Chemical mapping of a 207-nucleotide RNA with 2A3 and DMS. The reactions ran in a buffer of 150 mM KOAc, 10 mM MgCl2 and 150 mM bicine (pH 8.5), at 24 C.
RNA sequence: GGGAACGACUCGAGUAGAGUCGAAAAGCUACGCUUCGGCGUAGCAAAAAAGCGUACUACAACGAAGUGGCCUUGAAGUACCGUAACAUCCCUCCCAAAUAGGAGGGUGGGUAUGGAGCCACCGUUGUAUCGCAAAAAAGCGUGAUUCGUCACGCAAUGGAUCAGAAAGUUUCGACUUUCUGAUCCAAAAAGAAACAACAACAACAAC
Reactivity to 2A3 in 0.01 (KOAc 150mM, MgCl2 10mM, bicine 150mM(pH8.5), 24C), signal-to-noise 2, nucleotides 027 to 156: g000c000u000a010c000g020c040u080u190c300g040g000c010g010u010a000g000c040a020a000a000a000a000a030g030c050g000u050a070c040u010a000c000a000a020c010g120a300a050g010u000g000g000c050c000u090u170g060a130a000g000u000a000c000c000g080u080a060a000c020a300u240c010c010c010u060c000c020c000a210a300a070u290a080g000g000a020g000g000g000u090g000g000g000u000a000u030g060g050a040g000c000c010a000c000c000g000u030u000g010u000a010u030c010g020c000a050a010a030a000a070a180g000c000g010u000g020a010u000u170c170g040u000c200a000c010g000c010a060a020
Reactivity to DMS in 0.01 (KOAc 150mM, MgCl2 10mM, bicine 150mM(pH8.5), 24C), signal-to-noise 2, nucleotides 027 to 156: g020c010u000a030c000g030c000u000u000c300g060g100c030g000u010a000g000c000a000a010a040a070a040a060g030c050g050u000a060c190u010a040c010a070a050c030g040a120a150g050u000g010g010c000c250u000u020g000a120a270g010u010a030c000c020g020u000a050a050c000a190u000c010c010c000u000c000c000c040a050a150a190u010a100g020g010a030g000g000g000u000g000g010g010u000a000u000g000g000a080g020c000c000a010c020c000g000u000u000g000u000a000u010c020g070c040a000a070a090a110a070a070g020c000g000u000g020a080u000u010c180g020u000c000a010c000g060c020a000a140
The DMS profile rests on 3,284 reads. Values cover nucleotides 27 to 156. For 2A3, 1,049 sequencing reads were counted.